RNA sequence: GGGAACGACUCGAGUAGAGUCGAAAAGUCCCGCCUCCCACCCCGCCUCUGGACUUGUCUCUUUCUCCGCGCGCGCGGACAGAGCCGGCGUUUAGGCCCGAGCGAGCCCGGGGGCCGCCGGCCGGGAUGUUAACAGGAUAUUCGUAUCCUGUUAACAAAAAGAAACAACAACAACAAC
Reactivity to 2A3 in 0.01 (KOAc 150mM, MgCl2 10mM, bicine 150mM(pH8.5), 24C), signal-to-noise 5, nucleotides 027 to 126: g040u020c000c000c000g020c010c020u000c010c010c010a040c000c010c000c010g020c010c000u020c020u030g020g020a040c000u040u080g040u060c010u000c000u060u140u030c060u000c010c000g010c000g020c020g020c030g010c020g040g010a030c030a020g070a020g020c010c010g020g010c020g020u050u060u180a100g030g010c000c010c010g020a020g030c030g010a020g020c010c020c010g040g010g010g010g000c000c010g010c000c000g010g000c010c020g010g020g020a040
Reactivity to DMS in 0.01 (KOAc 150mM, MgCl2 10mM, bicine 150mM(pH8.5), 24C), signal-to-noise 5, nucleotides 027 to 126: g000u000c000c000c010g020c080c040u000c020c010c020a160c070c040c040c090g010c040c030u000c040u010g010g010a120c110u000u020g000u000c020u000c010u000u020u010c090u010c020c000g010c060g010c180g030c090g020c030g000g010a040c120a060g000a120g020c030c010g000g000c030g020u010u030u030a170g010g010c020c000c030g010a120g010c070g020a090g020c000c010c020g010g000g000g010g000c070c010g000c030c010g000g010c020c010g010g000g010a110